[RMDB]
RNA sequence: GGGAACGACUCGAGUAGAGUCGAAAAUCUGUGUCUGUUCCCUUCAGUCGUUUUAGUAGAUCCAGGUAAAUAUUGAUUUACCCCCAGUUUGCCUCCUUCCUCUGGCCAUUUGCAGACUAAGGAACUGACAUUUCACGUCUUUCGAGACGUGAAAUGUAAAAGAAACAACAACAACAAC
Reactivity to 2A3 in 0.01 (KOAc 150mM, MgCl2 10mM, bicine 150mM(pH8.5), 24C), signal-to-noise 2, nucleotides 027 to 126: u000c010u040g080u000g050u070c020u050g010u010u000c000c070c000u020u070c070a020g000u010c020g030u000u000u000u210a050g020u020a030g000a150u030c040c020a040g040g010u030a000a070a030u140a110u140u130g180a120u020u040u090a060c000c000c000c000c000a030g020u020u110u100g030c000c020u000c000c000u030u000c000c000u040c030u010g000g060c050c000a130u060u060u040g000c020a010g000a050c030u040a050a030g050g000a070a050c030u020g010
Reactivity to DMS in 0.01 (KOAc 150mM, MgCl2 10mM, bicine 150mM(pH8.5), 24C), signal-to-noise 2, nucleotides 027 to 126: u000c080u010g020u010g010u000c010u000g010u030u010c000c030c040u010u000c120a010g000u000c000g000u000u080u050u000a010g000u010a030g000a060u000c000c120a160g020g020u040a060a050a110u020a110u030u030g000a120u000u030u000a060c030c010c050c030c070a130g010u030u000u030g000c010c000u000c010c020u010u000c020c000u000c020u020g000g020c070c070a060u030u010u000g000c070a040g000a080c090u000a070a130g000g010a040a020c100u000g010